[RMDB]
The record gives the reactivity of an RNA of 177 nucleotides to 2A3 and DMS. For DMS, 2,955 sequencing reads were counted.
RNA sequence: GGGAACGACUCGAGUAGAGUCGAAAAGCGACUUCUUCGCAUAUCUGCAUAAUUUCUUGCGGAUGAUGACGUAAUUCACCGUUCGGGCAAUUCCAGAUGGCAGUCAGUGGAUUAAUCACGCAGUUGAUCUCGAUGAGAUAUUCGUAUCUCAUCGAGAAAAAGAAACAACAACAACAAC
Reactivity to 2A3 in 0.01 (KOAc 150mM, MgCl2 10mM, bicine 150mM(pH8.5), 24C), signal-to-noise 2, nucleotides 027 to 126: g040c030g020a030c040u060u050c000u060u040c090g000c070a040u020a020u050c010u010g040c010a040u050a100a130u190u180u150c100u040u010g020c000g010g010a040u040g060a020u030g060a080c010g020u070a080a130u060u070c010a030c040c050g080u120u070c010g060g030g060c030a010a090u110u020c000c000a100g080a120u110g040g050c010a000g010u020c020a000g010u060g040g000a010u040u090a020a030u150c030a030c060g020c050a070g110u130u110g070a060
Reactivity to DMS in 0.01 (KOAc 150mM, MgCl2 10mM, bicine 150mM(pH8.5), 24C), signal-to-noise 3, nucleotides 027 to 126: g010c030g010a060c140u000u010c060u010u000c040g020c040a070u010a090u000c020u000g020c060a030u000a100a140u010u010u020c180u010u000g030c000g010g020a010u000g010a060u010g020a040c070g020u000a050a110u010u000c050a070c040c020g010u010u000c060g020g020g030c040a050a090u010u010c050c080a060g000a080u020g010g010c030a060g010u000c050a060g020u000g000g020a070u010u000a080a090u000c040a040c060g000c090a090g000u000u000g010a160
The RNA was probed in 150 mM KOAc, 10 mM MgCl2 and 150 mM bicine (pH 8.5) at 24 C.
Values cover nucleotides 27 to 126.